Structure probing data (2A3 and DMS) for a 177-nucleotide construct.
In probing experiments dimethyl sulfate is read out at A N1 and C N3, which are open when not base-paired.
High 2A3 reactivity points to a flexible backbone, as in loops and unpaired stretches.
The RNA was probed in 150 mM KOAc, 10 mM MgCl2 and 150 mM bicine (pH 8.5) at 24 C.
Reactivities are given for positions 27 through 126.
The data come from the RNA Mapping Database (RMDB), library M2PK50.
RNA sequence: GGGAACGACUCGAGUAGAGUCGAAAAUAUUACAUCUUCGGAUGUAAUAACUGGUGGUGGCUGGCUUGAUGCUAGUGGCGCAACUGUUGCCAUGACUGCGCAAUCGCUCUGAAUUCGUUCAGAGCAAUUCUACAUAAAGGUUCGCCUUUAUGUAGAAAAAAGAAACAACAACAACAAC
Reactivity to 2A3 in 0.01 (KOAc 150mM, MgCl2 10mM, bicine 150mM(pH8.5), 24C), signal-to-noise 7, nucleotides 027 to 126: u040a000u010u000a000c000a000u000c010u030u040c180g110g000a000u000g000u000a000a000u010a020a040c050u060g050g010u030g010g040u040g050g040c030u020g010g010c020u040u130g060a050u140g060c020u030a020g030u020g090g000c020g010c010a050a160c090u140g100u210u110g020c010c010a020u050g040a050c070u070g010c040g000c040a030a090u120c100g000c010u000c000u000g000a020a020u070u050c210g040u070u010c020a000g000a000g000c000a000a010
Reactivity to DMS in 0.01 (KOAc 150mM, MgCl2 10mM, bicine 150mM(pH8.5), 24C), signal-to-noise 9, nucleotides 027 to 126: u000a010u000u000a000c000a000u000c000u000u010c210g030g010a010u000g000u000a000a000u000a020a120c090u000g010g020u000g010g020u000g010g010c030u000g010g020c050u000u000g010a090u010g010c040u000a110g030u000g010g000c030g010c040a100a110c120u000g010u010u000g010c020c030a050u000g010a110c110u000g000c070g020c120a120a080u010c150g000c000u000c000u000g000a020a040u000u010c190g010u000u000c000a010g010a010g010c000a020a010